Chemical mapping of a 207-nucleotide RNA with DMS and 2A3. The RNA was probed in 150 mM KOAc, 10 mM MgCl2 and 150 mM bicine (pH 8.5) at 24 C. Reactivities are given for positions 27 through 156.
[RMDB]
RNA sequence: GGGAACGACUCGAGUAGAGUCGAAAAAGUCUAAAACGUAAUUACAAGGCUUAUAGUCCCUGUUGGGGACUAGAAUGUUUAUUGGCUUUCCUUGUGCAAUUCAAUGCUCUUCCUCCAAAGGAUCCACUCCAAACUUGGAACUUUCCUGAAAAUAGCAAGUGCAUAAUGGAUUCGUCCAUUAUGCACUAAAAGAAACAACAACAACAAC
Reactivity to DMS in 0.01 (KOAc 150mM, MgCl2 10mM, bicine 150mM(pH8.5), 24C), signal-to-noise 2, nucleotides 027 to 156: a070g020u000c020u010a060a020a140a110c090g030u000a110a110u010u010a150c060a090a080g000g010c020u000u020a130u000a060g020u010c010c010c000u010g040u010u000g030g030g020g000a020c000u000a000g010a110a110u000g000u000u000u000a040u000u000g020g020c060u000u000u000c050c010u000u000g070u000g040c010a070a060u000u000c050a070a080u000g010c020u010c130u000u000c010c020u020c030c000a050a030a080g000g000a150u000c030c020a050c170u000c060c050a080a070a120c110u000u000g010g010a050a070c020u010u000u000c000c020u010g020a050a030a040a090u020a110g020c050a050
Reactivity to 2A3 in 0.01 (KOAc 150mM, MgCl2 10mM, bicine 150mM(pH8.5), 24C), signal-to-noise 4, nucleotides 027 to 156: a000g030u030c020u060a050a020a050a020c050g060u080a110a100u200u200a070c050a150a020g050g010c010u080u030a030u020a110g010u000c000c000c000u050g210u110u260g010g000g000g010a000c000u000a010g020a040a040u060g030u050u110u080a170u110u070g020g000c000u020u040u020c010c020u020u030g020u010g000c020a010a050u050u080c010a020a100u060g010c030u030c010u030u010c010c020u030c030c030a040a080a040g030g000a050u020c020c030a030c050u000c010c020a050a170a260c100u060u030g010g000a050a040c010u010u070u060c000c010u070g060a020a110a020a010u160a010g100c080a110